[RMDB]
RNA sequence: GGGAACGACUCGAGUAGAGUCGAAAAACCGUCCAGCAUUCAUGAAAGACUCAACAAGAAAUGAGCGCGUUGAUAUUGCAGUCACGACCUCAGAUGGACCCGCUGAAAUAUCACUUAUUGCUGGUGCUGUUGCACGACGGAUCCAUCCAUAUAUUGACUUUCCGUCUCCUUUCGAGGAGACGGAAAGAAAAGAAACAACAACAACAAC
Reactivity to 2A3 in 0.01 (KOAc 150mM, MgCl2 10mM, bicine 150mM(pH8.5), 24C), signal-to-noise 1, nucleotides 027 to 156: a000c000c010g000u010c010c000a010g030c010a050u090u270c050a080u220g070a070a150a080g010a180c020u030c060a060a100c030a150a080g160a190a100a190u100g010a030g000c070g000c010g000u060u010g010a030u030a030u090u100g060c040a000g000u030c050a030c110g100a120c020c030u120c060a120g030a070u020g040g010a060c000c000c000g000c000u000g010a000a000a000u010a000u010c020a030c050u130u050a030u060u300g040c110u030g020g040u050g000c020u030g030u000u040g180c130a080c060g170a000c030g020g010a010u050c000c000a030u000c070c030a110u180a000u000a050u080u260g050a040